[RMDB]
Source: RMDB library RNAMAK, as collected in RNAgym. This 207-nucleotide RNA was probed chemically with DMS and 2A3. DMS adducts were read by reverse transcription with MarathonRT. The RNA was probed in 150 mM KOAc, 10 mM MgCl2 and 150 mM bicine (pH 8.5) at 24 C.

RNA sequence: GGGAACGACUCGAGUAGAGUCGAAAAGCGUACUACGACCACUUGGAUUUAGUCCGCAAGACAUAUUUUAAGUUGGUCCCAAAUAGGACCAACUACCAUAUGUUGAUGACCGGACUUGUCAGUGGUCGUAUCGCAAAGCGAUACGUUCGCGUAUCGCGAUAUAUUAGCUAUUCGUAGCUAAUAUAUCAAAAGAAACAACAACAACAAC
Reactivity to DMS in 0.01 (KOAc 150mM, MgCl2 10mM, bicine 150mM(pH8.5), 24C), signal-to-noise 4, nucleotides 027 to 156: g010c010g030u000a090c120u000a020c010g010a020c000c000a040c010u000u000g030g010a050u010u000u000a020g040u010c000c010g020c030a080a290g010a020c010a020u000a010u000u000u000u000a050a060g040u000u000g010g020u000c000c010c010a080a180a270u010a060g020g000a020c000c010a000a000c010u000a020c120c070a030u000a010u000g010u000u000g010a120u000g010a100c280c010g020g000a030c000u000u000g010u000c000a050g020u000g000g020u000c010g000u000a000u000c010g000c030a080a080a150g010c010g000a010u000a010c000g030u000u000c270g030c010g030u000a010u000c000g030c040
Reactivity to 2A3 in 0.01 (KOAc 150mM, MgCl2 10mM, bicine 150mM(pH8.5), 24C), signal-to-noise 9, nucleotides 027 to 156: g000c010g040u100a070c070u000a000c020g000a000c000c010a010c040u070u210g150g000a060u300u230u150a010g000u000c000c000g000c040a060a100g010a000c000a000u010a020u020u080u030u090a170a020g000u000u000g020g000u030c010c010c010a240a300a120u300a100g000g000a000c000c000a000a000c000u000a000c010c000a000u000a000u010g010u010u020g080a250u120g030a060c100c020g000g000a000c000u000u010g000u000c000a000g000u030g000g000u000c010g000u010a000u000c000g000c000a020a140a020g000c000g000a000u000a000c000g020u050u110c300g000c000g170u000a000u000c000g000c000